[RMDB]
The data come from the RNA Mapping Database (RMDB), library M2RFPK. The record gives the reactivity of an RNA of 207 nucleotides to 2A3 and DMS. For 2A3, 1,973 sequencing reads were counted. Values cover nucleotides 27 to 156. 2A3 is a SHAPE reagent: it acylates the 2'-hydroxyl of flexible nucleotides of all four kinds.
RNA sequence: GGGAACGACUCGAGUAGAGUCGAAAAGAACUUUGGCCGGCUCGGAAUAUAAUCAGGGGGUGCAAACUGCCCACUGGCAGAAAGGAUUAUAGCAAAUGCGUACCCUAUUGCAAUACAGCCCGGCCAACAUAGACUACUCUAUUCGUAGAGUAGUCAAGAACAGUAUCAUCUUCGGAUGAUACUGUUCAAAAGAAACAACAACAACAAC
Reactivity to 2A3 in 0.01 (KOAc 150mM, MgCl2 10mM, bicine 150mM(pH8.5), 24C), signal-to-noise 3, nucleotides 027 to 156: g020a090a010c020u060u020u040g000g000c000c000g000g040c020u030c100g060g030a100a040u130a010u030a120a080u120c080a050g000g000g000g030g020u070g030c030a080a030a080c020u020g000c030c020c060a140c190u130g010g000c020a000g080a050a090a000g090g020a070u120u130a100u190a100g060c100a100a070a130u090g010c020g030u070a080c010c000c000u020a120u010u060g050c040a050a050u060a090c030a020g010c040c070c010g000g000c000c000a010a000c000a010u020a020g010a000c000u000a000c000u000c000u000a020u070u080c120g060u080a000g000a000g010u000a000g000u010c000a000a000
Reactivity to DMS in 0.01 (KOAc 150mM, MgCl2 10mM, bicine 150mM(pH8.5), 24C), signal-to-noise 1, nucleotides 027 to 156: g000a070a070c080u010u000u000g040g000c040c000g010g000c000u020c070g020g040a110a080u010a070u010a050a050u000c080a080g010g000g040g070g040u000g000c070a040a100a180c040u000g000c020c020c030a070c070u000g010g010c040a020g010a230a110a160g040g000a120u000u010a070u000a140g010c030a080a070a090u010g010c060g030u010a110c030c010c010u010a120u010u000g010c030a100a150u000a150c040a120g000c080c040c050g050g040c010c030a010a010c140a120u000a040g000a000c000u000a010c000u000c000u010a040u000u000c220g010u010a040g000a000g010u000a010g030u010c050a010a070